The record gives the reactivity of an RNA of 177 nucleotides to DMS and 2A3.
The reactions ran in a buffer of 150 mM KOAc, 10 mM MgCl2 and 150 mM bicine (pH 8.5), at 24 C.
The 2A3 profile rests on 787 reads.
DMS adducts were read by reverse transcription with MarathonRT.
The data come from the RNA Mapping Database (RMDB), library OK2TST.
[RMDB]
RNA sequence: GGGAACGACUCGAGUAGAGUCGAAAAUACAGAGGCGGUCUGACUCUCUGGCAAGUGAUGCUGAUUCAGCUCUGCCUGGCCAGUGGACACCUGUUCACAGGGAACCCCUCUCUCGGCACAUGGUUUAGAUCAUAAUCCCGUUCGCGGGAUUAUGAUCAAAAGAAACAACAACAACAAC
Reactivity to DMS in 0.01 (KOAc 150mM, MgCl2 10mM, bicine 150mM(pH8.5), 24C), signal-to-noise 2, nucleotides 027 to 126: u010a100c120a140g010a030g030g010c140g030g000u000c060u010g030a090c100u000c030u000c090u010g030g030c030a040a060g000u010g070a110u010g020c050u000g000a140u000u020c020a000g000c050u000c090u000g020c060c000u000g020g000c080c060a050g030u020g020g000a070c060a170c140c070u010g010u000u010c100a040c010a080g010g010g020a100a150c040c040c010c010u000c040u010c040u000c050g010g000c050a030c070a060u020g010g010u010u000u010a100
Reactivity to 2A3 in 0.01 (KOAc 150mM, MgCl2 10mM, bicine 150mM(pH8.5), 24C), signal-to-noise 1, nucleotides 027 to 126: u200a020c070a000g020a050g060g030c090g030g030u000c050u070g030a140c000u000c000u040c010u080g040g010c030a030a010g050u000g110a120u140g020c040u020g020a300u080u160c030a010g050c060u000c040u080g050c020c000u000g040g020c000c000a030g010u080g060g000a030c010a050c070c140u100g050u120u080c070a090c030a060g020g000g030a060a060c010c000c000c000u000c010u010c010u030c050g000g040c030a050c040a180u120g070g100u070u110u220a030